[RMDB]
RNA sequence: GGGAACGACUCGAGUAGAGUCGAAAAUAUAGCCGACCUGAUAUGUUCGUCAAGAAGGCGAUCGAGCAAAUGGAGCACAACAACCAGAUCGAUAUGUUGUUACCUGCCGAUAACUCGACGGCGUGGUUUACUGAGGCGCGACAGCACGCGGCUGAAAGGAAUCAGAGUACUUCGGUACUCUGAUUCCAAAAGAAACAACAACAACAAC
Reactivity to 2A3 in 0.01 (KOAc 150mM, MgCl2 10mM, bicine 150mM(pH8.5), 24C), signal-to-noise 1, nucleotides 027 to 156: u160a000u010a020g000c010c010g050a140c040c140u050g010a000u010a070u300g050u070u090c040g040u080c020a080a110g010a170a000g130g000c050g000a030u020c010g040a000g000c030a000a100a000u210g080g000a010g170c110a030c080a080a070c030a110a030c130c000a040g020a040u000c030g000a000u080a020u300g020u000u000g010u020u000a020c030c000u050g080c000c000g030a090u110a070a060c020u090c030g050a010c000g020g040c040g060u060g000g060u120u140u100a130c100u100g050a020g000g050c080g010c020g110a070c060a040g000c070a030c070g000c000g070g040c000u100g010a080a080a160